[RMDB]
RNA sequence: GGGAACGACUCGAGUAGAGUCGAAAAGUGGCACAGUUCGCUGUGCCACAAAGGACUACCCGUCAGGGUUAAGGCCAUACGGACAGCCGGGACCACUGCCGAAAAUCCGUAGCUUCGGCUACGGAAAGGUGUUAAUAGAGUUCGCUCUAUUAACACCAAAAGAAACAACAACAACAAC
Reactivity to 2A3 in 0.01 (KOAc 150mM, MgCl2 10mM, bicine 150mM(pH8.5), 24C), signal-to-noise 5, nucleotides 027 to 126: g010u010g010g020c000a000c010a020g000u050u080c150g060c110u000g000u000g000c000c000a000c000a000a000a000g000g000a030c020u080a080c020c010c000g040u100c090a080g040g020g000u060u100a080a060g020g000c010c010a050u070a100c050g040g040a030c020a020g030c030c000g030g000g000a010c010c010a060c070u040g020c020c000g030a080a020a000a060u010c000c000g000u000a000g010c000u030u030c210g110g010c000u000a000c000g000g000a020a000a010
Reactivity to DMS in 0.01 (KOAc 150mM, MgCl2 10mM, bicine 150mM(pH8.5), 24C), signal-to-noise 5, nucleotides 027 to 126: g020u000g000g000c000a010c010a010g020u000u010c240g030c010u010g010u000g000c010c000a000c010a020a050a090g010g000a080c050u000a090c010c000c010g000u020c190a080g010g000g000u000u000a040a090g000g000c020c010a100u000a100c110g000g010a080c070a100g010c040c020g020g010g000a070c020c020a120c080u000g000c030c030g010a110a060a080a120u000c010c000g010u000a000g000c000u000u010c180g020g010c000u000a000c010g010g000a010a020a030